[RMDB]
RNA sequence: GGGAACGACUCGAGUAGAGUCGAAAACGCGGCUUCGGCCGCGAUCGAUCCUAAGUCGUACUCUAGAGGCUUACUGGAGCAAGUCGGAAACGACUUGCGUUGAAAGUAAGCUACCCACCUAGAUUACGAUAUGGAGUUGACCGCAAUUCGUUGCGAAAACAGUAACUCUAUUCGUAGAGUUACUGUUAAAAGAAACAACAACAACAAC
Reactivity to 2A3 in 0.01 (KOAc 150mM, MgCl2 10mM, bicine 150mM(pH8.5), 24C), signal-to-noise 2, nucleotides 027 to 156: c010g010c010g000g010c000u100u110c300g160g000c000c000g000c000g000a010u040c030g050a060u010c000c000u020a120a030g020u000c010g000u010a000c030u000c000u010a010g000a020g050g000c010u000u000a000c000u010g000g000a040g000c020a000a010g000u000c000g000g080a110a060a070c020g000a010c000u000u000g000c000g030u060u030g010a000a000a000g000u000a000a000g000c000u010a010c030c010c000a070c000c010u000a000g000a000u010u000a000c000g000a010u020a060u110g020g010a040g040u120u180g160a140c040c010g010c060a050a100u150u130c140g090u090u040g060c040g060a100a300
Reactivity to DMS in 0.01 (KOAc 150mM, MgCl2 10mM, bicine 150mM(pH8.5), 24C), signal-to-noise 4, nucleotides 027 to 156: c050g040c000g030g050c000u000u000c300g050g000c020c010g040c000g020a010u000c000g010a040u000c000c000u000a090a300g020u000c000g000u010a040c110u000c000u000a020g000a140g030g000c010u000u000a000c000u000g000g000a260g010c020a020a010g010u020c000g010g010a180a130a260c010g020a020c000u000u000g010c000g020u000u010g010a150a190a090g010u010a000a020g010c020u000a000c010c020c050a300c140c010u000a010g000a020u000u000a010c000g010a020u000a270u000g020g000a030g000u000u000g010a110c030c010g030c020a100a130u000u010c110g000u000u000g010c000g000a040a070
The record gives the reactivity of an RNA of 207 nucleotides to 2A3 and DMS.
Reactivities are given for positions 27 through 156.
Source: RMDB library RNAMAK, as collected in RNAgym.
For 2A3, 4,285 sequencing reads were counted.